[RMDB]
Chemical mapping of a 207-nucleotide RNA with 2A3. For 2A3, 416 sequencing reads were counted. Source: RMDB library OK3TST, as collected in RNAgym. The reactions ran in a buffer of 150 mM KOAc, 10 mM MgCl2 and 150 mM bicine (pH 8.5), at 24 C.

RNA sequence: GGGAACGACUCGAGUAGAGUCGAAAAGUGUGCAUUUCAAACUUCUAAAUGCUGAAAUUAGCAAGGCAUGUGGGCGGCACCAAGGACUGGCCUCAGAUGAAAGAGGAGGUGAUCUGGGCUUGGGCACCCCCAAUUUCAGGUGGAACCCUGCAGCCAAUCCUACCCAGUAGUUCGCUACUGGGUAGGAAAAAGAAACAACAACAACAAC
Reactivity to 2A3 in 0.01 (KOAc 150mM, MgCl2 10mM, bicine 150mM(pH8.5), 24C), signal-to-noise 1, nucleotides 027 to 156: g060u050g000u040g050c030a020u060u030u070c090a100a210a140c050u160u200c020u190a080a030a020u090g000c010u040g080a130a160a130u150u050a100g040c140a190a020g000g050c040a090u010g010u000g050g050g010c050g060g020c030a000c070c000a030a070g020g050a010c030u060g020g060c020c000u020c030a130g120a190u050g040a010a040a110g020a020g100g000a010g030g000u000g050a000u080c030u030g000g070g000c060u030u000g000g000g000c090a060c010c000c000c000c010a000a010u050u180u020c090a000g050g000u020g010g010a020a040c000c010c000u000g080c000a030g020c010c000a000a030